An RNA of 177 nucleotides, treated with DMS and 2A3 and read out base by base. Conditions: 150 mM KOAc, 10 mM MgCl2 and 150 mM bicine (pH 8.5), 24 C. The DMS profile rests on 3,188 reads. 2A3 adducts were read by reverse transcription with SuperScript II with manganese. For 2A3, 2,576 sequencing reads were counted.
RNA sequence: GGGAACGACUCGAGUAGAGUCGAAAAGAUCAAUUAUGAUUGCAAUGUAAUAUGUCAAGGCAGACAUAUCUAGCUGUCGCCUUAGCUAGAGAUAGCCGCUUUAUUGCUUUCAUAAGAACGGCGAGAACAUACCUAGCCCAUUCGUGGGCUAGGUAUGAAAAGAAACAACAACAACAAC
Reactivity to DMS in 0.01 (KOAc 150mM, MgCl2 10mM, bicine 150mM(pH8.5), 24C), signal-to-noise 3, nucleotides 027 to 126: g020a130u010c080a100a200u000u000a010u000g000a010u000u000g010c010a030a010u000g020u000a070a070u010a030u030g000u010c110a050a110g020g000c040a140g000a040c060a030u000a060u000c030u000a020g000c040u000g000u000c080g000c080c050u010u000a020g020c000u000a000g000a060g010a100u010a110g000c010c070g010c060u000u000u000a030u000u000g000c000u010u000u000c010a010u000a010a040g000a080a070c210g010g020c020g000a120g020a100a260
Reactivity to 2A3 in 0.01 (KOAc 150mM, MgCl2 10mM, bicine 150mM(pH8.5), 24C), signal-to-noise 2, nucleotides 027 to 126: g050a100u120c030a010a090u060u010a000u020g010a000u000u010g030c010a030a010u050g030u200a080a050u080a090u220g130u120c050a070a070g020g000c030a030g020a110c010a050u100a060u000c020u020a020g010c000u030g100u140c030g120c040c000u060u060a010g000c000u000a000g000a000g000a040u190a070g030c030c040g040c020u080u090u080a010u000u020g000c000u010u020u010c030a000u000a000a030g040a100a020c060g050g020c050g020a080g030a100a010